[RMDB]
RNA sequence: GGGAACGACUCGAGUAGAGUCGAAAAGCCUGGAUUACUGCGGUUCAGUUCUUGUCCGCCGGGCAAGCCAGUCCCGCGGGGCGAAUUGGUCUCGGAACUUAACCCUAAGUAUACCUUUGGUUCUGAAAGCGUUUGUUAGUUUCGACUAACAAACGCUAAAAGAAACAACAACAACAAC
Reactivity to 2A3 in 0.01 (KOAc 150mM, MgCl2 10mM, bicine 150mM(pH8.5), 24C), signal-to-noise 1, nucleotides 027 to 126: g020c000c000u050g000g020a050u010u050a130c000u060g030c050g010g000u000u000c040a000g000u000u000c000u040u140g060u000c000c030g180c130c120g030g000g110c110a050a010g080c010c020a020g070u100c000c000c020g000c010g000g010g030g020c000g120a150a130u200u110g110g140u000c010u030c080g030g000a010a010c000u050u050a000a010c000c060c000u000a110a050g040u080a080u140a160c020c000u070u060u080g020g000u000u000c000u000g050a140a030